Notes:
Structure probing data (DMS) for a 170-nucleotide construct. High DMS reactivity at an A or C suggests that its Watson-Crick edge is free. The reactions ran in a buffer of 150 mM KOAc, 10 mM MgCl2 and 150 mM bicine (pH 8.5), at 24 C. For DMS, 8,287 sequencing reads were counted. The data come from the RNA Mapping Database (RMDB), library 15KLIB.
[RMDB]
RNA sequence: GGGAACGACUCGAGUAGAGUCGAAAAAGUGGUCCACGGCGUAUCAAGUUUGGAGUCAUCCGGCCGAAGGGUUGAGAUGACCCACAGUCGGGUGAUCCACCAGGAGGGUGGAGGAGAGACCACCUCCGAAGGCGUCCUUUCGAGGACGCCAAAAGAAACAACAACAACAAC
Reactivity to DMS in 0.01 (KOAc 150mM, MgCl2 10mM, bicine 150mM(pH8.5), 24C), signal-to-noise 3, nucleotides 027 to 129: a080g050u040g010g020u010c000c090a130c090g030g020c050g030u100a080u000c080a050a120g020u050u000u000g000g000a250g050u030c000a010u010c000c000g000g000c060c060g070a160a170g000g020g000u000u000g000a130g030a120u090g050a070c010c040c000a070c080a100g010u010c000g010g050g050u040g040a090u030c020c020a020c080c070a230g020g030a050g010g060g000u060g030g000a030g010g050a140g050a300g050a050c000c020a030c040c030u000c000c040g000a090a060